An RNA of 177 nucleotides, treated with DMS and read out base by base.

RNA sequence: GGGAACGACUCGAGUAGAGUCGAAAAGAUAUGGACCGAUUCAGAGUGCCGACCUUUCCGAUAAGUUGCACUCGGAAACGAGUGGCAACUUUUGACGGAAAGGGCACUCUGAAUCGGUCCUAAGUCAUCAAAGAAUUAUGUUCGCAUAAUUCUUUGAAAAAGAAACAACAACAACAAC
Reactivity to DMS in 0.01 (KOAc 150mM, MgCl2 10mM, bicine 150mM(pH8.5), 24C), signal-to-noise 3, nucleotides 027 to 126: g000a050u000a300u010g010g010a020c010c000g000a010u000u000c000a020g010a010g010u000g000c030c130g000a300c300c010u000u000u010c000c000g000a140u000a010a010g000u000u000g000c000a020c000u000c000g000g000a100a060a180c020g000a020g030u010g000g000c000a020a010c000u000u000u010u000g040a200c150g000g010a020a020a000g000g000g000c010a000c010u000c000u010g010a000a000u000c020g010g000u000c000c000u000a000a070g010u010c040a200

The reactions ran in a buffer of 150 mM KOAc, 10 mM MgCl2 and 150 mM bicine (pH 8.5), at 24 C.